This 177-nucleotide RNA was probed chemically with 2A3 and DMS.
RNA sequence: GGGAACGACUCGAGUAGAGUCGAAAACCGUGAUGGAGCGCGGCCCGGAGACCAGGCAAAUCCGGUCUCCAGGAGGGCGAGGCUCCGGACGAAGCGAUCGAGCGAAGCGAGUGAGCCCGAGGUCCCUGAACGCAUUAGAGUUCGCUCUAAUGCGUUCAAAAGAAACAACAACAACAAC
Reactivity to 2A3 in 0.01 (KOAc 150mM, MgCl2 10mM, bicine 150mM(pH8.5), 24C), signal-to-noise 4, nucleotides 027 to 126: c010c000g010u050g020a120u100g000g010a010g010c060g010c080g050g090c000c000c000g000g010a010g000a010c040c130a150g030g020c160a060a040a110u220c000c000g000g000u010c000u000c000c000a010g080g070a160g000g000g010c020g010a070g020g000c000u000c000c000g000g000a010c000g060a050a020g030c040g070a060u060c010g010a010g060c020g020a060a010g050c030g020a030g060u110g030a020g010c020c010c000g010a020g050g030u020c000c010c010u030
Reactivity to DMS in 0.01 (KOAc 150mM, MgCl2 10mM, bicine 150mM(pH8.5), 24C), signal-to-noise 2, nucleotides 027 to 126: c030c010g030u030g000a080u000g000g010a000g050c000g000c110g000g020c000c000c000g010g000a000g000a000c020c000a100g000g030c240a120a150a190u070c030c000g000g020u000c000u000c010c000a050g000g000a200g020g000g020c030g000a180g000g000c040u020c000c000g000g000a090c130g000a300a070g000c070g030a140u010c120g020a240g020c000g000a070a170g020c010g000a030g050u030g000a070g000c000c010c020g040a060g070g000u020c000c010c030u000
For DMS, 2,385 sequencing reads were counted. The RNA was probed in 150 mM KOAc, 10 mM MgCl2 and 150 mM bicine (pH 8.5) at 24 C.